[RMDB]
RNA sequence: GGGAACGACUCGAGUAGAGUCGAAAAAAAAGGAAUCUCUACCGCAAGACCAAAAAUAAUAAGUCCUGUUUCUGGUCCUGAACAUCCAGAAUUAUGGAGGCUUACUGUGGCCUCACACCACAUUAGAAGCUAAUAGUCUAUUCGUAGACUAUUAGCUAAAAGAAACAACAACAACAAC
Reactivity to DMS in 0.01 (KOAc 150mM, MgCl2 10mM, bicine 150mM(pH8.5), 24C), signal-to-noise 6, nucleotides 027 to 126: a020a030a060a060g010g000a070a030u010c040u010c020u030a100c070c030g000c080a100a050g000a100c030c040a020a070a050a080a070u030a080a060u020a080a090g000u010c020c010u000g010u000u000u010c020u000g010g000u010c060c030u000g000a070a060c190a060u020c000c010a050g000a080a050u040u020a070u020g010g000a060g010g000c010u010u000a080c130u010g010u010g000g000c040c020u010c070a040c130a120c050c030a030c090a060u030u030a090g000a140
Reactivity to 2A3 in 0.01 (KOAc 150mM, MgCl2 10mM, bicine 150mM(pH8.5), 24C), signal-to-noise 9, nucleotides 027 to 126: a000a000a000a000g130g010a080a060u030c030u000c010u050a080c010c020g040c060a070a040g040a090c020c040a060a030a020a020a050u260a100a040u090a090a010g040u020c000c020u030g030u040u020u020c020u010g030g020u050c000c080u120g050a080a020c020a060u050c010c000a000g020a070a030u170u110a070u210g080g010a050g030g010c000u020u030a070c050u120g040u090g070g000c000c010u080c010a010c000a000c000c010a030c010a060u130u190a060g070a200